[RMDB]
RNA sequence: GGGAACGACUCGAGUAGAGUCGAAAAGAAAGCGUCAUUCGACGAAUGAGAAGGUAAUGCCGCAAAGAAAAACGUGCGCAACCUUCUCAGCGCACGACAAGAAAUCUCAUUCGCAGAAAUAAGAAAACAUACCACGCUGGUUCGCCAGCGUGGUAUGAAAAGAAACAACAACAACAAC
Reactivity to DMS in 0.01 (KOAc 150mM, MgCl2 10mM, bicine 150mM(pH8.5), 24C), signal-to-noise 2, nucleotides 027 to 126: g040a040a140a080g000c000g000u010c110a170u040u030c060g000a190c000g070a000a000u000g000a000g040a110a210g000g000u000a010a090u100g100c020c100g000c250a140a050a060g040a110a010a000a140a020c010g010u000g000c080g010c000a270a000c070c100u000u000c030u000c080a020g000c030g160c000a020c010g000a300c120a000a020g070a100a090a070u030c030u020c000a090u000u000c050g000c300a180g000a090a000a040u030a050a110g000a050a070a120a180
Reactivity to 2A3 in 0.01 (KOAc 150mM, MgCl2 10mM, bicine 150mM(pH8.5), 24C), signal-to-noise 3, nucleotides 027 to 126: g110a000a050a020g050c010g010u010c060a060u060u090c090g230a110c000g000a060a050u000g000a000g000a130a040g030g000u120a070a020u130g010c000c010g100c080a050a070a020g180a090a100a030a020a010c020g010u010g010c030g010c020a090a120c020c010u070u040c040u020c020a000g000c000g000c000a020c020g080a040c110a020a070g150a070a080a070u000c010u000c000a040u090u040c030g060c050a020g120a150a060a020u300a100a010g010a070a070a020a000

The record gives the reactivity of an RNA of 177 nucleotides to DMS and 2A3. It was measured as part of the RMDB library OK1LIB. Conditions: 150 mM KOAc, 10 mM MgCl2 and 150 mM bicine (pH 8.5), 24 C. For 2A3 the reverse transcriptase was SuperScript II with manganese.